An RNA of 177 nucleotides, treated with DMS and 2A3 and read out base by base. The RNA was probed in 150 mM KOAc, 10 mM MgCl2 and 150 mM bicine (pH 8.5) at 24 C. It was measured as part of the RMDB library RFM100.
RNA sequence: GGGAACGACUCGAGUAGAGUCGAAAAGAAAGAAAUCUACAAUGGUGAUGGGUGAAUUUGUAGAAGGAUGAAAGUCAAAGAAUCCUUCUGGGAACUAAUUUUUGGCCUUCAACAAGAAUUGUGAUAAGUACACCGAUAUCUUCGGAUAUCGGUGUACAAAAGAAACAACAACAACAAC
Reactivity to DMS in 0.01 (KOAc 150mM, MgCl2 10mM, bicine 150mM(pH8.5), 24C), signal-to-noise 1, nucleotides 027 to 126: g020a090a100a060g000a140a150a010u030c010u000a070c020a110a070u030g020g000u040g010a040u010g000g010g020u020g010a060a080u000u000u000g020u000a030g010a020a000g010g020a030u030g010a060a010a020g010u050c160a010a110a110g030a180a060u000c010c010u000u010c050u080g010g020g000a120a100c140u010a070a080u000u000u040u000u010g000g000c000c010u000u030c100a040a020c020a000a060g010a080a150u020u050g000u000g000a050u050a010a190
Reactivity to 2A3 in 0.01 (KOAc 150mM, MgCl2 10mM, bicine 150mM(pH8.5), 24C), signal-to-noise 2, nucleotides 027 to 126: g090a000a060a010g080a050a060a110u110c060u040a040c020a070a000u130g060g000u080g100a110u080g000g030g040u150g040a100a290u080u020u020g160u070a040g000a040a010g000g010a000u020g080a000a020a080g110u120c110a060a010a100g020a020a020u010c000c000u000u010c080u030g000g070g000a000a060c070u040a000a170u000u000u080u080u000g160g000c000c010u100u140c030a030a120c010a080a000g210a180a110u100u030g040u000g060a060u000a230a060